[RMDB]
RNA sequence: GGGAACGACUCGAGUAGAGUCGAAAACGACGUGGUUUCGACCACGUCGACAUGGAGCAACAUUUACUCGUGAAGUGGGUCAGGGGAGGAAUCCAGCAGCCCUAAGCGAUGCUAAAUGUGUGCUCUUUUUGGUUCGCAUCGAAUUCGUUCGAUGCGACUCAGUUAUCUCAUUCGUGAGAUAACUGAGAAAAGAAACAACAACAACAAC
Reactivity to 2A3 in 0.01 (KOAc 150mM, MgCl2 10mM, bicine 150mM(pH8.5), 24C), signal-to-noise 4, nucleotides 027 to 156: c010g010a000c000g000u010g000g050u020u110u150c240g070a010c000c000a000c000g000u010c000g000a000c010a070u200g010g000a000g010c010a000a020c000a000u030u000u010a010c010u010c020g020u070g080a190a100g130u110g070g000g020u070c010a020g000g030g010g010a020g030g130a060a090u000c000c000a000g010c000a000g000c000c000c000u010a030a010g000c010g010a020u100g030c080u030a000a000a010u030g000u050g050u030g000c000u000c020u020u010u000u030u030g050g010u030u010c000g000c010a000u000c000g010a010a010u110u070c230g060u140u010c000g010a010u020g000c000g000a000
Reactivity to DMS in 0.01 (KOAc 150mM, MgCl2 10mM, bicine 150mM(pH8.5), 24C), signal-to-noise 2, nucleotides 027 to 156: c020g000a050c000g070u010g000g000u000u010u010c240g000a080c000c010a020c000g040u000c000g020a030c070a100u010g010g030a040g030c000a040a030c010a030u020u000u000a020c000u080c020g000u000g010a130a090g000u000g000g010g030u000c040a300g010g020g010g020a080g060g040a140a180u000c000c000a040g000c030a250g020c010c000c010u000a080a290g000c010g010a060u000g050c070u000a000a030a000u010g030u000g020u000g030c020u000c010u000u000u000u000u000g020g000u000u000c000g000c010a000u000c010g020a030a060u000u020c300g030u010u000c000g010a010u000g000c000g010a020

Chemical mapping of a 207-nucleotide RNA with 2A3 and DMS. DMS adducts were read by reverse transcription with MarathonRT. DMS (dimethyl sulfate) methylates the pairing face of unpaired adenines and cytosines. Conditions: 150 mM KOAc, 10 mM MgCl2 and 150 mM bicine (pH 8.5), 24 C. High 2A3 reactivity points to a flexible backbone, as in loops and unpaired stretches.